Chemical mapping of a 177-nucleotide RNA with DMS and 2A3.
Source: RMDB libraries RFM100 and RFMREP, as collected in RNAgym.
Conditions: 150 mM KOAc, 10 mM MgCl2 and 150 mM bicine (pH 8.5), 24 C.

RNA sequence: GGGAACGACUCGAGUAGAGUCGAAAAGUUGCGCCAUGAAAAUGGCAAGACGGGUCGGGGCUGGCAUAGAAAGGCCGGUAGGCAGUGCAGCGGAAGGUAAGAAAACCGCCAAGCGAAAUUAAGUCGGAUGUAGGAUGAGAUUCGUCUCAUCCUACAUAAAAGAAACAACAACAACAAC
Reactivity to DMS in 0.01 (KOAc 150mM, MgCl2 10mM, bicine 150mM(pH8.5), 24C), signal-to-noise 6, nucleotides 027 to 126: g020u010u000g010c300g000c000c010a000u000g000a120a050a120a020u000g000g000c000a050a210g000a050c010g010g000g010u010c060g020g010g010g010c030u010g010g000c060a080u000a080g010a080a130a070g010g000c030c020g000g020u010a040g010g000c060a080g010u000g000c070a130g010c040g000g020a040a080g000g030u040a100a130g000a060a100a090a060c020c010g010c040c060a070a150g000c020g000a070a060a110u020u040a060a100g000u010c040g000g010
Reactivity to 2A3 in 0.01 (KOAc 150mM, MgCl2 10mM, bicine 150mM(pH8.5), 24C), signal-to-noise 4, nucleotides 027 to 126: g020u020u070g020c030g000c020c000a010u060g090a040a010a010a030u000g000g000c000a000a000g020a010c020g000g010g020u070c050g000g000g000g020c010u030g040g000c010a070u060a100g170a050a130a020g050g000c010c010g000g020u030a020g030g000c050a010g020u050g010c000a010g010c010g000g010a090a020g090g010u090a060a060g060a070a080a010a010c020c010g010c020c000a080a040g030c030g070a040a020a090u200u150a150a060g080u060c030g050g000